[RMDB]
RNA sequence: GGGAACGACUCGAGUAGAGUCGAAAAGCUCGGAGACGAGCAAGGCUGACAAAACUUUGUCCCAACCUCCACGUGGUGUCGGCUGGAUAAUGCUGCAUUAUGUUGCAUUUAUCAACUGGGAAUGAAAGCCGAUCCCGUCAUUCGUGACGGGAUCGGCAAAAGAAACAACAACAACAAC
Reactivity to 2A3 in 0.01 (KOAc 150mM, MgCl2 10mM, bicine 150mM(pH8.5), 24C), signal-to-noise 1, nucleotides 027 to 126: g000c000u000c000g000g010a040g000a000c000g000a000g000c000a040a040g070g000c100u100g000a030c060a000a080a000a080c050u050u050u000g080u000c070c000c000a000a040c000c000u050c000c020a120c110g120u070g000g000u000g000u000c000g000g000c000u000g000g000a000u000a060a000u020g000c030u030g000c000a060u030u010a080u300g000u070u000g050c000a000u000u000u240a040u000c000a000a040c050u080g000g000g030a120a100u110g090a110a010a000